[RMDB]
RNA sequence: GGGAACGACUCGAGUAGAGUCGAAAACAUCUUGUUGCCAAUAGGCUAGGAUACUUCUAGUACUCCAUGAUGCAUUUCUUCAUGUGUUCUGAUUCUAGAUGCUAAGGCAGUAAUGACAGGACAUGGAAAAGGCUUGCCUCUGUGAGUUUCCAUACUCGCAUUUGCAUAUGUUCGCAUAUGCAAAUGCAAAAGAAACAACAACAACAAC
Reactivity to 2A3 in 0.01 (KOAc 150mM, MgCl2 10mM, bicine 150mM(pH8.5), 24C), signal-to-noise 2, nucleotides 027 to 156: c010a060u070c020u110u200g240u250u080g060c020c050a150a260u100a170g000g000c010u010a030g030g000a070u080a210c080u150u100c030u060a060g030u050a040c060u030c020c000a030u150g010a000u010g040c020a030u030u030u040c000u000u030c010a020u110g020u000g020u070u000c000u010g070a230u140u000c000u040a040g010a250u020g020c000u060a050a090g160g010c010a000g020u110a000a090u130g020a000c000a000g010g000a010c000a020u030g000g000a060a120a010a000g000g000c000u040u010g010c000c030u030c010u010g150u080g090a040g000u060u020u030c050c010a080u050a120c040u060c100
Reactivity to DMS in 0.01 (KOAc 150mM, MgCl2 10mM, bicine 150mM(pH8.5), 24C), signal-to-noise 1, nucleotides 027 to 156: c110a070u000c050u010u000g030u000u000g000c010c040a130a100u030a130g010g020c000u000a080g000g030a120u000a060c180u000u000c010u000a050g070u000a090c040u010c050c050a090u040g030a010u000g000c020a150u000u010u000c010u010u000c010a250u040g010u010g020u020u010c020u000g020a290u000u010c020u000a220g010a110u000g050c050u000a090a160g110g000c000a010g000u000a050a170u000g010a100c040a040g030g000a030c050a070u000g030g010a090a040a060a020g010g000c000u000u000g050c000c050u030c020u010g020u020g020a080g010u010u000u000c050c030a180u000a090c110u000c130

Notes: Source: RMDB library OK3TST, as collected in RNAgym. Chemical mapping of a 207-nucleotide RNA with 2A3 and DMS. The RNA was probed in 150 mM KOAc, 10 mM MgCl2 and 150 mM bicine (pH 8.5) at 24 C. 2A3 is a SHAPE reagent: it acylates the 2'-hydroxyl of flexible nucleotides of all four kinds. Values cover nucleotides 27 to 156. 2A3 adducts were read by reverse transcription with SuperScript II with manganese. For DMS the reverse transcriptase was MarathonRT.